[RMDB]
RNA sequence: GGGAACGACUCGAGUAGAGUCGAAAAAGAUCUUGAUGCGUUAGCUAGUGAUAUUUUUGACACUCCUAGCGUACUUCAAGCUACUCUUUCUGAGUUUUCACACUUAGCUACCUUUGCUGAGUUGGAAUGACAGCGCGUUUCGACGCGCUGAAAAGAAACAACAACAACAAC
Reactivity to 2A3 in 0.01 (KOAc 150mM, MgCl2 10mM, bicine 150mM(pH8.5), 24C), signal-to-noise 4, nucleotides 027 to 129: a000g090a070u060c000u000u000g000a010u010g000c010g010u000u000a000g000c100u010a010g000u010g040a070u050a260u250u250u100u230u220g090a010c000a000c000u000c010c010u000a000g000c000g000u000a050c050u000u000c000a010a000g000c000u060a000c000u000c000u020u070u000c050u050g080a090g050u040u000u010u000c070a050c000a000c010u030u000a000g000c010u080a160c020c080u230u130u190g020c000u030g000a000g000u040u000g020g010a060a010u080g050a030
Reactivity to DMS in 0.01 (KOAc 150mM, MgCl2 10mM, bicine 150mM(pH8.5), 24C), signal-to-noise 5, nucleotides 027 to 129: a000g010a150u030c000u010u020g010a040u030g030c050g070u010u000a000g050c100u020a020g030u020g010a110u070a060u020u050u050u100u050g000a190c060a040c040u000c300c000u010a010g050c040g050u050a060c120u000u000c020a000a000g000c050u000a060c070u020c010u000u030u010c020u030g020a140g020u050u030u010u000c070a020c120a050c000u040u000a000g030c020u030a090c210c150u000u000u000g010c000u020g020a030g020u000u000g000g010a050a060u020g000a100
This 170-nucleotide RNA was probed chemically with 2A3 and DMS. The RNA was probed in 150 mM KOAc, 10 mM MgCl2 and 150 mM bicine (pH 8.5) at 24 C. It was measured as part of the RMDB library 15KLIB. Reactivities are given for positions 27 through 129.